[RMDB]
RNA sequence: GGGAACGACUCGAGUAGAGUCGAAAACUGAGGUUGAGUGGGAUUGCUGCCCUGCUUGUCACUGCAGAGCCAAAGAGGCCGCGCGCCACCCCGGGCAGGCCCACCAAGCGGUAUUACUGCCCGGAGGGAACUUGUUGUGAUUCGUCACAACAAGUUCAAAAGAAACAACAACAACAAC
Reactivity to 2A3 in 0.01 (KOAc 150mM, MgCl2 10mM, bicine 150mM(pH8.5), 24C), signal-to-noise 2, nucleotides 027 to 126: c010u060g040a030g140g050u120u110g020a010g020u040g050g000g020a080u010u180g030c030u040g010c000c000c010u030g000c040u120u080g120u110c040a020c090u040g000c020a020g010a040g070c030c030a060a170a080g100a110g050g020c020c040g060c000g000c000g000c040c000a040c000c000c000c000g010g000g000c000a010g000g020c040c010c000a030c010c010a080a050g070c090g040g000u040a070u090u240a070c010u000g000c000c000c030g010g000a050g060g040
Reactivity to DMS in 0.01 (KOAc 150mM, MgCl2 10mM, bicine 150mM(pH8.5), 24C), signal-to-noise 4, nucleotides 027 to 126: c070u000g010a070g030g000u010u000g010a090g010u010g020g000g020a170u000u000g010c090u010g010c020c020c020u010g020c030u010u010g020u000c110a110c130u000g000c020a030g000a120g020c020c050a050a120a160g010a140g010g010c030c040g040c260g010c090g010c020c040a250c020c010c000c010g000g020g000c010a010g010g010c080c090c050a070c090c090a060a100g010c100g020g010u000a080u000u010a200c030u000g000c010c000c010g000g020a060g010g000